An RNA of 177 nucleotides, treated with DMS and 2A3 and read out base by base.
RNA sequence: GGGAACGACUCGAGUAGAGUCGAAAAGCCAUCUCAAAAUUGCAGUCCUUGCCAAGUGGGAAUAUAUCAUUGUUAUGCGAUGUUUUAGUUAAGGAAGUUAGUGAUUUGACAGGUUAUGAUCGUGUAACCUAAUGAGUCAUUUCGAUGACUCAUUAGGAAAAGAAACAACAACAACAAC
Reactivity to DMS in 0.01 (KOAc 150mM, MgCl2 10mM, bicine 150mM(pH8.5), 24C), signal-to-noise 7, nucleotides 027 to 126: g010c030c030a060u030c050u020c080a050a030a040a050u020u020g010c050a080g000u000c000c020u010u010g010c030c050a100a100g020u020g000g010g000a080a060u020a080u000a050u000c040a040u010u000g010u000u020a070u020g010c040g010a020u010g010u010u010u010u000a100g010u020u020a050a060g010g000a050a060g010u030u010a060g020u000g000a050u010u020u010g010a070c110a050g000g000u010u010a050u020g010a070u020c090g010u000g010u020a040a080
Reactivity to 2A3 in 0.01 (KOAc 150mM, MgCl2 10mM, bicine 150mM(pH8.5), 24C), signal-to-noise 5, nucleotides 027 to 126: g040c010c000a070u020c040u030c030a080a150a060a090u090u120g000c020a010g050u040c010c020u040u040g060c010c020a130a080g070u150g060g070g050a070a000u120a020u040a020u120c030a060u020u090g060u100u130a060u130g010c030g010a020u000g080u040u070u030u090a070g010u030u100a080a010g050g020a080a030g050u050u090a060g030u130g050a090u050u030u060g050a030c040a020g030g030u070u090a070u150g060a070u080c070g010u040g010u060a020a030

The 2A3 profile rests on 6,343 reads.
The RNA was probed in 150 mM KOAc, 10 mM MgCl2 and 150 mM bicine (pH 8.5) at 24 C.
For DMS, 25,181 sequencing reads were counted.